This 177-nucleotide RNA was probed chemically with 2A3 and DMS.
RNA sequence: GGGAACGACUCGAGUAGAGUCGAAAAGAAAGCUCCUCAGCCGUGUGGAGGAGAAUGGCUAUAACCACAGAAACCUGAGGAAACAGGAAGCCACAACGCAAGCCAUGUGGUUGGCACACGGAAGAAAACCGGUAAUAAAUUUCGAUUUAUUACCGGUAAAAGAAACAACAACAACAAC
Reactivity to 2A3 in 0.01 (KOAc 150mM, MgCl2 10mM, bicine 150mM(pH8.5), 24C), signal-to-noise 7, nucleotides 027 to 126: g130a020a070a010g070c000u000c000c000u000c010a040g060c010c000g010u010g000u010g020g010a010g010g010a010g020a020a040u070g010g000c020u030a030u070a300a070c010c010a040c030a050g120a070a100a030c000c000u050g040a110g060g300a120a040a040c000a000g010g010a010a010g010c020c000a030c020a120a050c090g050c090a090a020g040c040c010a050u070g000u010g030g000u020u080g050g000c010a000c000a000c010g000g040a030a010g060a010a070a000
Reactivity to DMS in 0.01 (KOAc 150mM, MgCl2 10mM, bicine 150mM(pH8.5), 24C), signal-to-noise 8, nucleotides 027 to 126: g000a100a140a120g000c010u000c000c000u000c000a080g010c000c010g010u000g010u000g000g000a010g000g000a010g010a050a070u010g010g010c030u000a110u010a100a130c020c030a090c120a080g000a100a090a130c020c000u010g000a170g010g020a130a120a140c030a010g000g010a170a060g000c000c010a060c130a060a070c190g010c160a090a070g000c090c120a110u010g010u010g000g000u010u010g000g000c010a000c010a000c000g000g000a210a110g010a090a040a100
It was measured as part of the RMDB library OK1LIB.
For 2A3, 7,849 sequencing reads were counted.
The RNA was probed in 150 mM KOAc, 10 mM MgCl2 and 150 mM bicine (pH 8.5) at 24 C.
Values cover nucleotides 27 to 126.